[RMDB]
RNA sequence: GGGAACGACUCGAGUAGAGUCGAAAAAUGAGUUGCUGUGAGGACCUACAGGUUGUCCGGUACAAACCUGGCACCUUUUACAAGGCCCAUCACGAUUCGUGCUGCGAUGACAGCAAGGCGUGCCAGGAAUUUGAAACGAAAGGUGGGCAGCGGGUGGCUCUAGCUAGGCAUUCGUGCCUAGCUAGAGAAAAGAAACAACAACAACAAC
Reactivity to 2A3 in 0.01 (KOAc 150mM, MgCl2 10mM, bicine 150mM(pH8.5), 24C), signal-to-noise 1, nucleotides 027 to 156: a020u180g000a020g030u010u040g010c110u050g070u220g100a050g020g010a040c000c000u020a070c070a030g000g040u070u030g020u060c020c020g000g010u150a120c060a000a070a010c000c000u030g000g000c020a000c000c000u030u040u020u120a080c110a090a070g030g000c010c010c010a000u000c000a020c070g080a060u160u220c030g030u050g000c100u060g000c010g070a230u060g010a030c010a000g000c020a010a000g120g000c190g010u010g010c010c000a000g000g090a000a000u040u030u020g040a010a010a020c040g020a050a050a050g010g000u000g000g000g000c000a000g080c000g040g050g040u190g000g000

This 207-nucleotide RNA was probed chemically with 2A3.
For 2A3, 476 sequencing reads were counted.
Source: RMDB library OK3TST, as collected in RNAgym.